This 207-nucleotide RNA was probed chemically with 2A3 and DMS.
For DMS, 3,441 sequencing reads were counted.
[RMDB]
RNA sequence: GGGAACGACUCGAGUAGAGUCGAAAACUUUGACAUUGCUGUUGAGGACGCGGCUAACGCCGAUCCGGUCCGGCAGGCUGUUAAGGAUGGCGUUGUUACCACUACGGUCAACGAUAACGGCUAUGCCGCUUCGGUGGCUGCGCUGAACCCGAAGAAGUAUACACUGCUGUUUCGACAGCAGUGUAUAAAAAGAAACAACAACAACAAC
Reactivity to 2A3 in 0.01 (KOAc 150mM, MgCl2 10mM, bicine 150mM(pH8.5), 24C), signal-to-noise 3, nucleotides 027 to 156: c040u070u020u180g020a030c040a100u070u170g030c030u030g020u110u030g110a110g050g020a060c060g020c020g050g000c020u060a150a010c090g000c010c000g030a070u130c070c090g030g030u050c030c000g000g000c010a000g030g000c000u000g010u030u020a040a040g160g010a160u110g090g000c000g010u010u010g040u050u130a010c020c020a140c160u170a050c140g050g070u100c010a000a000c010g160a000u070a100a000c020g000g000c000u050a190u260g000c020c000g010c030u010u010c020g050g010u070g000g000c030u050g010c020g000c000u000g030a040a050c000c000c020g000a080a030g000a030a010g060
Reactivity to DMS in 0.01 (KOAc 150mM, MgCl2 10mM, bicine 150mM(pH8.5), 24C), signal-to-noise 2, nucleotides 027 to 156: c040u010u010u020g020a030c070a060u020u000g010c030u010g000u000u000g010a100g000g030a060c030g020c030g070g030c010u010a080a140c180g010c000c050g000a030u000c080c040g000g030u000c020c000g040g050c000a120g010g000c010u040g030u000u010a030a070g000g010a150u010g010g020c080g030u000u000g010u000u020a150c120c070a170c110u000a080c020g060g010u000c040a050a060c000g160a180u000a040a060c030g030g000c020u010a070u010g020c000c020g010c040u000u000c030g000g040u010g020g020c040u000g000c010g030c030u000g000a120a050c030c000c010g010a080a110g000a090a220g020

2A3 adducts were read by reverse transcription with SuperScript II with manganese.
The data come from the RNA Mapping Database (RMDB), library OK3TST.
Conditions: 150 mM KOAc, 10 mM MgCl2 and 150 mM bicine (pH 8.5), 24 C.